An RNA of 207 nucleotides, treated with 2A3 and read out base by base.
Reactivities are rounded to 0.1 and cut off at 0 and 3.

RNA sequence: GGGAACGACUCGAGUAGAGUCGAAAAUGCGCUGCGCGUGUGGACGUUUGAAGACCCCGAGGUGAAGGCGCAGGCGUUCCCACCGGCGAGCGUCGAGCCGUACAACGCGGUGCUCGACGAGAUGCUGCAGCACGUGGCGAUGGUCGCUCAGAUCAGCCCAACGCAUUCGAUUCGUCGAAUGCGUUGGAAAAGAAACAACAACAACAAC
Reactivity to 2A3 in 0.01 (KOAc 150mM, MgCl2 10mM, bicine 150mM(pH8.5), 24C), signal-to-noise 2, nucleotides 027 to 156: u250g000c060g000c000u020g000c040g010c000g030u050g050u130g020g070a040c060g040u060u030u190g050a070a070g160a140c000c000c010c000g190a160g020g270u160g030a050a000g000g000c020g020c040a000g040g000c000g000u040u000c050c010c000a000c000c050g000g000c040g010a050g100c020g010u010c030g000a000g000c000c040g050u100a100c280a300a020c200g010c000g000g020u120g120c000u000c000g040a040c000g000a010g030a020u160g040c030u010g050c020a050g100c000a000c080g000u020g060g000c000g020a020u130g020g010u010c020g000c000u040c150a040g010a070u010c030a040g040c000